RNA sequence: GGGAACGACUCGAGUAGAGUCGAAAAGGUGGUUCGAUUCCGCCUCUGGGCACCAAAAUAUGGCGGUAUAGCUUAGUUGGCUAGAGCGUUCGGUUCAUACCCGAAAGGUCAUAGGUUCGACUCCUAAGGAUCCCAUGAUGUUCGCAUCAUGGGAUCCAAAAGAAACAACAACAACAAC
Reactivity to DMS in 0.01 (KOAc 150mM, MgCl2 10mM, bicine 150mM(pH8.5), 24C), signal-to-noise 1, nucleotides 027 to 126: g000g030u000g010g000u000u000c080g000a300u090u010c130c040g020c000c000u000c040u040g000g000g000c040a180c000c010a100a130a100a210u100a000u000g000g000c140g010g030u060a030u000a000g040c000u000u050a090g010u000u010g000g000c000u000a090g000a020g010c040g000u010u000c020g000g120u000u000c300a140u080a000c300c000c020g000a040a030a070g000g000u200c040a000u080a120g000g000u000u000c060g030a140c030u000c000c100u070a000a100
Reactivity to 2A3 in 0.01 (KOAc 150mM, MgCl2 10mM, bicine 150mM(pH8.5), 24C), signal-to-noise 2, nucleotides 027 to 126: g070g070u070g000g090u040u030c030g000a030u070u070c000c000g010c000c000u000c010u020g000g010g000c040a040c050c090a090a060a080a050u200a090u120g050g010c040g000g120u140a090u070a080g040c000u160u010a010g050u220u130g090g030c000u010a010g000a000g040c120g020u050u000c030g000g070u030u080c080a060u060a200c020c000c000g010a100a000a000g120g000u020c020a050u090a110g020g020u020u100c030g000a000c020u020c040c000u050a120a060
About this RNA
The record gives the reactivity of an RNA of 177 nucleotides to DMS and 2A3. For 2A3, 753 sequencing reads were counted. DMS adducts were read by reverse transcription with MarathonRT. High DMS reactivity at an A or C suggests that its Watson-Crick edge is free.